Annotation
The data come from the RNA Mapping Database (RMDB), library OK2TST. Structure probing data (DMS) for a 177-nucleotide construct.
RNA sequence: GGGAACGACUCGAGUAGAGUCGAAAAGGGUUUUUCAGUGGCGUAAAGAUCAACCCGAAGCUGUCACUGUCGAGUUAAUUGAAGAGAAUAUACAGCCUUUGUGUAUUGCUGAGUCUAAGCAGGGGAACUCAUCAGGGGCAUUCGUGCCCCUGAUGAGAAAAGAAACAACAACAACAAC
Reactivity to DMS in 0.01 (KOAc 150mM, MgCl2 10mM, bicine 150mM(pH8.5), 24C), signal-to-noise 1, nucleotides 027 to 126: g000g000g040u000u000u060u000u000c010a120g050u020g020g030c060g050u010a020a200a110g000a050u000c050a060a090c020c010c000g010a050a110g010c050u010g010u010c050a070c010u000g000u000c100g000a100g000u000u000a080a160u000u020g000a050a060g020a150g000a100a050u000a110u000a080c040a030g020c100c090u010u010u000g000u000g010u000a030u010u000g030c020u010g010a120g000u000c110u020a060a100g010c050a060g010g000g000g000a100a160
The DMS profile rests on 855 reads.